[RMDB]
An RNA of 170 nucleotides, treated with DMS and 2A3 and read out base by base. The DMS profile rests on 58,520 reads. Values are in units of 0.01, from 0 to 300, in steps of 10. High 2A3 reactivity points to a flexible backbone, as in loops and unpaired stretches. The RNA was probed in 150 mM KOAc, 10 mM MgCl2 and 150 mM bicine (pH 8.5) at 24 C. 2A3 adducts were read by reverse transcription with SuperScript II with manganese.
RNA sequence: GGGAACGACUCGAGUAGAGUCGAAAACUCUUAAGGAGUUGAUGAUGUAUGCCGCUGAUCCAGCCAUGCACAUUGCCUCCUCUAACGCUUUUCUUGAUUUGAGGACAUCAUGUUUUAGUGUCGCUGCUGACGUCAGUCUUCGGACUGACGAAAAGAAACAACAACAACAAC
Reactivity to DMS in 0.01 (KOAc 150mM, MgCl2 10mM, bicine 150mM(pH8.5), 24C), signal-to-noise 9, nucleotides 027 to 129: c030u020c000u060u060a080a040g000g000a000g030u020u030g020a030u020g030a090u040g000u000a060u000g000c140c240g060c000u040g000a130u020c170c050a070g010c000c010a000u040g020c040a010c030a050u040u030g030c140c010u000c000c020u000c050u000a060a070c180g000c070u040u020u020u020c030u010u020g010a070u010u000u000g030a040g030g030a080c060a080u040c060a080u000g040u030u050u030u040a070g030u000g000u010c040g030c010u000g010c040u000g020a160
Reactivity to 2A3 in 0.01 (KOAc 150mM, MgCl2 10mM, bicine 150mM(pH8.5), 24C), signal-to-noise 9, nucleotides 027 to 129: c000u010c000u060u130a060a020g010g000a000g010u020u000g010a010u010g040a060u000g010u010a010u010g090c160c080g000c050u020g060a300u190c170c040a010g000c000c000a000u010g010c000a010c000a000u000u000g010c000c000u000c000c000u040c040u060a080a060c080g060c080u060u060u070u060c010u040u140g120a190u100u050u170g070a060g050g010a020c010a040u080c030a070u140g220u110u130u060u160a070g010u020g020u030c040g030c150u110g010c030u060g040a030